An RNA of 177 nucleotides, treated with DMS and 2A3 and read out base by base. 2A3 is a SHAPE reagent: it acylates the 2'-hydroxyl of flexible nucleotides of all four kinds. For 2A3 the reverse transcriptase was SuperScript II with manganese. The reactions ran in a buffer of 150 mM KOAc, 10 mM MgCl2 and 150 mM bicine (pH 8.5), at 24 C.
RNA sequence: GGGAACGACUCGAGUAGAGUCGAAAACUAGGCAGGGGUGGGGUGAUUAUUGAGGAGAUAGACGAUGACAUCAGCGAGAGCGCCGCCGAUGUCAGCGAGGCAGACAUCCAGGCGCUGACGGCGUCCGGAUAUCAAUCAUCUUCGGAUGAUUGAUAUCAAAAGAAACAACAACAACAAC
Reactivity to DMS in 0.01 (KOAc 150mM, MgCl2 10mM, bicine 150mM(pH8.5), 24C), signal-to-noise 4, nucleotides 027 to 126: c080u000a180g000g020c110a090g000g020g020g010u010g030g000g010g000u010g000a060u000u010a060u000u000g010a090g010g010a090g000a080u010a060g000a110c060g000a070u000g010a040c030a060u000c050a070g010c020g020a140g000a080g010c070g010c020c000g020c170c140g000a010u000g010u000c000a010g010c010g010a140g020g010c100a080g000a080c070a040u000c000c060a160g000g010c010g010c010u000g000a050c110g000g000c040g040u010c010c150g000
Reactivity to 2A3 in 0.01 (KOAc 150mM, MgCl2 10mM, bicine 150mM(pH8.5), 24C), signal-to-noise 3, nucleotides 027 to 126: c030u020a030g040g000c090a070g020g030g090g080u180g030g030g000g020u070g060a050u040u300a070u120u160g040a070g040g020a050g010a040u080a060g050a030c050g020a040u070g010a010c020a040u060c020a020g050c010g030a090g000a000g090c070g000c030c000g010c020c020g000a000u020g010u020c000a000g020c030g030a090g130g000c020a020g000a060c010a030u000c010c010a010g000g000c000g000c000u020g010a010c030g020g040c020g020u020c010c020g040